[RMDB]
RNA sequence: GGGAACGACUCGAGUAGAGUCGAAAACAAUCAAUGUUACAAUAUAUUUGAGCAAGUUAGAUAGAUGGUGGCUAAUCUCAUGAAAAUGGGGUGAUGCCUAUGGUUUUGGUUUCUACUCCAAGAAAGGCUUUGUGGGUAUAUUCGUAUACCCACAAAGAAAAGAAACAACAACAACAAC
Reactivity to DMS in 0.01 (KOAc 150mM, MgCl2 10mM, bicine 150mM(pH8.5), 24C), signal-to-noise 3, nucleotides 027 to 126: c090a090a080u030c050a080a060u010g010u000u000a110c100a110a060u010a160u010a080u000u000u000g010a090g030c080a040a080g020u020u030a050g010a080u020a080g010a070u010g010g030u010g010g000c010u010a160a010u000c010u010c030a000u000g010a070a070a070a000u000g010g000g000g040u000g000a110u010g000c000c000u000a060u010g020g000u000u000u000u000g010g010u000u010u000c020u010a050c070u010c010c060a070a040g010a070a090a120g000g010
Reactivity to 2A3 in 0.01 (KOAc 150mM, MgCl2 10mM, bicine 150mM(pH8.5), 24C), signal-to-noise 4, nucleotides 027 to 126: c050a000a050u130c050a060a050u060g010u080u110a130c050a090a000u100a030u070a040u270u140u110g050a030g020c050a100a050g060u190u080a060g020a140u070a060g060a070u130g060g100u100g050g020c010u000a010a000u000c000u000c010a020u060g050a080a020a040a010u060g020g020g000g010u010g010a010u200g000c000c000u030a070u010g020g020u000u000u010u090g040g010u000u040u000c010u040a090c040u000c000c000a050a000g080a150a110a000g140g000
Chemical mapping of a 177-nucleotide RNA with DMS and 2A3. The RNA was probed in 150 mM KOAc, 10 mM MgCl2 and 150 mM bicine (pH 8.5) at 24 C. For 2A3 the reverse transcriptase was SuperScript II with manganese.